[RMDB]
RNA sequence: GGGAACGACUCGAGUAGAGUCGAAAAGAUAUGGAUACCUGAGCUGAUGACCGUAUUCGAUUCUCGGAAACGAGGGAAUACGCAAGGCUCCUGUAUCCUAAGUCAAACACACAGUUCGCUGUGUGAAGUGAUGAAAUGCGUUCGCGCAUUUCAUCACAAAAGAAACAACAACAACAAC
Reactivity to DMS in 0.01 (KOAc 150mM, MgCl2 10mM, bicine 150mM(pH8.5), 24C), signal-to-noise 1, nucleotides 027 to 126: g010a030u000a050u020g020g010a000u010a010c020c020u010g000a010g050c010u010g000a040u010g010a020c300c020g020u000a000u000u000c030g000a270u020u000c000u010c000g000g030a010a020a010c000g040a020g020g000g030a030a000u000a020c000g000c020a040a010g000g000c000u000c000c050u000g000u000a000u000c010c010u000a000a080g010u000c000a090a090a280c000a010c010a010c020a000g000u000u010c240g000c000u000g030u000g000u000g000a090a030
Reactivity to 2A3 in 0.01 (KOAc 150mM, MgCl2 10mM, bicine 150mM(pH8.5), 24C), signal-to-noise 1, nucleotides 027 to 126: g000a020u040a010u070g000g000a010u010a000c000c010u010g000a000g000c000u050g020a300u010g050a150c010c020g000u010a000u020u000c030g100a200u300u080c030u010c020g010g020a000a010a000c000g000a000g110g200g040a020a000u000a010c020g020c030a140a300g000g000c000u040c000c000u000g010u010a010u000c000c000u030a000a000g000u010c000a020a080a020c000a000c000a000c010a010g020u120u130c200g120c160u000g020u000g000u030g100a120a060
The data come from the RNA Mapping Database (RMDB), library TTRDEL.
An RNA of 177 nucleotides, treated with DMS and 2A3 and read out base by base.
DMS adducts were read by reverse transcription with MarathonRT.
The RNA was probed in 150 mM KOAc, 10 mM MgCl2 and 150 mM bicine (pH 8.5) at 24 C.